Chemical mapping of a 177-nucleotide RNA with DMS. Source: RMDB library OK2TST, as collected in RNAgym. The DMS profile rests on 737 reads.
[RMDB]
RNA sequence: GGGAACGACUCGAGUAGAGUCGAAAAUGAUGAUGGGUUGGACUGGGGACAAUGGGGACCCGGAUAACUUCUUCGCCACCCUGUUCAGCUGUGAUGCGGCCAAACAAGGUUCUAACUACUCCAAGUGAACGUCUCUCCAUUUCGAUGGAGAGACGUUAAAAGAAACAACAACAACAAC
Reactivity to DMS in 0.01 (KOAc 150mM, MgCl2 10mM, bicine 150mM(pH8.5), 24C), signal-to-noise 1, nucleotides 027 to 126: u020g010a070u000g010a090u000g010g010g000u000u000g000g000a150c060u000g000g020g000g010a140c080a100a110u020g020g010g000g010a090c010c000c000g010g000a200u000a060a100c040u000u000c020u010u000c040g010c050c040a090c000c010c020u000g000u000u000c090a110g010c080u010g030u000g020a090u000g000c040g010g000c010c080a040a040a090c060a100a090g000g020u000u000c070u020a030a050c110u010a080c090u010c020c260a130a100g010u000g020